An RNA of 177 nucleotides, treated with DMS and 2A3 and read out base by base. The RNA was probed in 150 mM KOAc, 10 mM MgCl2 and 150 mM bicine (pH 8.5) at 24 C.
RNA sequence: GGGAACGACUCGAGUAGAGUCGAAAACACAUCUGGCAAGUCUUAAAGAGCGCAUGCAAAGCAUCGCCAGCGAACAAGAGCUGGAGUUAUUACAGCAUUUUGAUAAGCACGAUGCGCAGAUGCGUGAGCUACCCUUCCUAUUCGUAGGAAGGGUAGCAAAAGAAACAACAACAACAAC
Reactivity to DMS in 0.01 (KOAc 150mM, MgCl2 10mM, bicine 150mM(pH8.5), 24C), signal-to-noise 3, nucleotides 027 to 126: c050a070c110a030u000c020u000g000g020c040a070a120g010u010c070u010u010a060a120a150g000a170g020c080g020c020a010u000g000c080a050a100a230g020c000a020u010c010g000c080c110a100g000c010g000a120a150c040a010a000g000a040g000c000u000g010g020a090g010u020u010a070u010u010a100c010a010g000c010a090u010u010u000u010g000a070u000a030a300g000c020a170c020g000a040u000g010c020g020c120a100g000a030u000g010c010g000u000g030a110
Reactivity to 2A3 in 0.01 (KOAc 150mM, MgCl2 10mM, bicine 150mM(pH8.5), 24C), signal-to-noise 5, nucleotides 027 to 126: c060a010c010a060u050c030u040g090g020c050a100a070g060u020c010u120u210a150a100a010g100a060g010c000g000c030a000u100g090c060a080a060a070g000c000a000u000c010g060c100c100a020g000c000g020a060a000c000a030a030g010a000g030c000u010g050g000a040g100u180u150a190u210u200a080c010a010g030c170a210u040u020u010u010g090a090u050a090a000g000c020a000c010g000a000u020g000c020g020c030a020g000a050u030g040c030g010u040g010a010
For 2A3, 4,981 sequencing reads were counted. DMS adducts were read by reverse transcription with MarathonRT.